Chemical mapping of a 177-nucleotide RNA with 2A3 and DMS. The RNA was probed in 150 mM KOAc, 10 mM MgCl2 and 150 mM bicine (pH 8.5) at 24 C.

[RMDB]
RNA sequence: GGGAACGACUCGAGUAGAGUCGAAAAGAUAUGGAUAAUGUACAGACAUGCUCUGGUCAUCGGAAACGAUGGUCCCAGAGCAACAGCUGUACCGCUUAUCCUAAGUCAAACUCGCGUUCGCGCGAGAGGACUUUAUUUCGUUCGCGAAAUAAAGUCCAAAAGAAACAACAACAACAAC
Reactivity to 2A3 in 0.01 (KOAc 150mM, MgCl2 10mM, bicine 150mM(pH8.5), 24C), signal-to-noise 1, nucleotides 027 to 126: g040a040u040a040u180g000g010a000u030a020a050u300g010u000a000c000a000g080a010c040a090u070g030c000u000c000u000g000g040u010c000a010u000c000g060g020a030a110a090c000g010a000u000g020g050u190c000c020c030a000g020a000g000c000a000a000c000a010g000c000u000g000u000a000c000c010g000c010u000u000a000u000c000c000u010a120a030g020u030c050a130a020a090c010u000c000g010c000g040u080u080c300g000c020g010c020g160a000g030a050
Reactivity to DMS in 0.01 (KOAc 150mM, MgCl2 10mM, bicine 150mM(pH8.5), 24C), signal-to-noise 2, nucleotides 027 to 126: g010a080u000a300u000g000g000a010u000a120a000u000g010u000a000c010a000g000a080c100a290u000g040c010u000c000u000g010g000u010c000a010u000c000g000g000a090a100a230c000g000a010u000g000g000u000c300c000c010a010g010a010g010c000a030a020c300a120g010c000u000g000u000a000c000c010g000c010u000u010a000u000c000c000u000a030a170g000u000c010a180a100a160c030u000c000g020c000g060u000u000c120g000c020g040c010g000a000g000a110

Notes:
The 2A3 profile rests on 3,692 reads. It was measured as part of the RMDB library TTRDES.